[RMDB]
RNA sequence: GGGAACGACUCGAGUAGAGUCGAAAACGACGCUGUCGCCGGCAUAGCAUUCGUCGAUCCAAUCACGUUGGGCGGCAAGCGUGCUCGGUGGAGGUUCGACGGCGUGGGCGGCCAAUGCGCUCUCCACGCCAGCGACUUGUUUCGACAAGUCGCUGGCAAAAGAAACAACAACAACAAC
Reactivity to 2A3 in 0.01 (KOAc 150mM, MgCl2 10mM, bicine 150mM(pH8.5), 24C), signal-to-noise 1, nucleotides 027 to 126: c020g060a020c040g000c020u000g030u110c030g010c010c000g030g000c010a000u080a110g000c000a100u150u100c060g010u000c020g060a110u090c000c000a010a030u120c110a030c300g060u090u060g000g020g000c010g040g030c010a010a030g040c030g060u030g020c030u040c040g030g000u080g000g060a080g020g010u080u120c020g000a060c070g040g000c010g020u010g010g030g000c000g000g050c010c010a140a180u240g020c060g000c030u040c000u000c000c010a000c030
Reactivity to DMS in 0.01 (KOAc 150mM, MgCl2 10mM, bicine 150mM(pH8.5), 24C), signal-to-noise 2, nucleotides 027 to 126: c080g020a080c140g060c020u010g000u000c060g000c000c000g020g030c050a050u010a040g040c010a220u030u010c130g050u020c120g000a040u030c010c010a060a070u000c110a090c180g010u000u000g020g000g020c000g000g000c010a030a040g010c050g000u000g010c020u010c030g000g020u010g020g030a300g000g000u000u010c040g000a150c090g020g020c010g010u000g000g000g030c300g000g000c000c070a080a070u010g020c050g010c010u000c070u020c020c000a030c090
Structure probing data (2A3 and DMS) for a 177-nucleotide construct. For 2A3, 1,494 sequencing reads were counted. The DMS profile rests on 1,215 reads. 2A3 adducts were read by reverse transcription with SuperScript II with manganese. Values cover nucleotides 27 to 126.